Background
Source: RMDB library OK2TRN, as collected in RNAgym. This 177-nucleotide RNA was probed chemically with DMS and 2A3. Reactivities are rounded to 0.1 and cut off at 0 and 3. DMS adducts were read by reverse transcription with MarathonRT.

RNA sequence: GGGAACGACUCGAGUAGAGUCGAAAAGGAUCCUAAGUACUCUGGGUAACUGCCUCGAGAUCAGUUACCAGUGAGGAGUACUCUAUUUGUCAAAGAUCUCGAGGUUGACGGAUAGAGAAUAGGAUCGCUACAGCUUAGUAUUCGUACUAAGCUGUAGAAAAGAAACAACAACAACAAC
Reactivity to DMS in 0.01 (KOAc 150mM, MgCl2 10mM, bicine 150mM(pH8.5), 24C), signal-to-noise 8, nucleotides 027 to 126: g000g000a010u000c000c010u010a040a140g020u000a050c000u000c000u000g010g010g010u010a050a050c010u000g010c130c030u000c150g010a100g000a030u000c010a040g000u000u000a030c040c030a100g010u010g010a110g000g000a090g010u000a090c000u000c000u000a020u000u000u000g010u000c030a030a070a080g000a060u000c040u000c050g010a040g010g020u000u000g000a040c050g000g000a060u010a010g000a040g010a140a100u000a010g010g010a010u000c000g010
Reactivity to 2A3 in 0.01 (KOAc 150mM, MgCl2 10mM, bicine 150mM(pH8.5), 24C), signal-to-noise 5, nucleotides 027 to 126: g010g000a000u010c000c000u020a070a010g060u030a080c010u000c020u080g080g000g020u050a040a040c000u000g010c010c020u030c050g070a070g000a010u060c000a010g030u030u030a000c000c010a030g050u050g050a060g020g020a040g040u060a050c000u000c000u010a040u000u020u020g010u000c020a030a020a050g040a080u010c020u010c030g030a020g050g000u010u010g000a020c020g000g010a000u020a030g020a010g010a040a000u020a020g010g000a000u000c000g000

Reactivities are given for positions 27 through 126.